[RMDB]
The record gives the reactivity of an RNA of 177 nucleotides to DMS and 2A3. 2A3 adducts were read by reverse transcription with SuperScript II with manganese. Reactivities are given for positions 27 through 126. The RNA was probed in 150 mM KOAc, 10 mM MgCl2 and 150 mM bicine (pH 8.5) at 24 C.
RNA sequence: GGGAACGACUCGAGUAGAGUCGAAAACAAUCAAUGGGUUGAUUCUGGCACAGCAAUAUUUUCAUAUUACUCCAGUCAGAGUAAUUUAUCCCAAUGAGUCGCCAAUUCGGAUGGCACAUUGCCAGAAAAUAUUUAAUAUCUUCGGAUAUUAAAUAUUAAAAGAAACAACAACAACAAC
Reactivity to DMS in 0.01 (KOAc 150mM, MgCl2 10mM, bicine 150mM(pH8.5), 24C), signal-to-noise 4, nucleotides 027 to 126: c120a100a110u040c120a120a070u020g000g020g010u000u000g000a080u000u010c010u010g010g000c010a070c170a060g020c070a080a060u020a040u020u010u020u030c100a070u020a030u000u000a010c000u000c080c120a140g040u060c240a080g000a010g000u010a000a000u020u020u020a060u020c030c000c000a100a070u020g010a050g010u010c060g010c020c010a040a130u040u030c140g010g000a130u010g000g010c020a030c040a050u010u000g000c010c030a020g000a040a050
Reactivity to 2A3 in 0.01 (KOAc 150mM, MgCl2 10mM, bicine 150mM(pH8.5), 24C), signal-to-noise 4, nucleotides 027 to 126: c030a010a060u180c040a030a120u170g110g000g040u020u040g040a060u040u000c000u000g010g020c010a000c020a030g070c010a050a050u040a120u120u120u060u100c030a020u050a000u170u010a010c010u020c030c030a100g200u170c110a010g040a000g010u020a010a010u040u120u130a100u040c000c000c010a010a050u090g020a010g080u110c090g010c020c010a010a020u190u090c080g160g030a080u040g040g000c000a010c000a080u030u100g000c000c000a000g000a030a050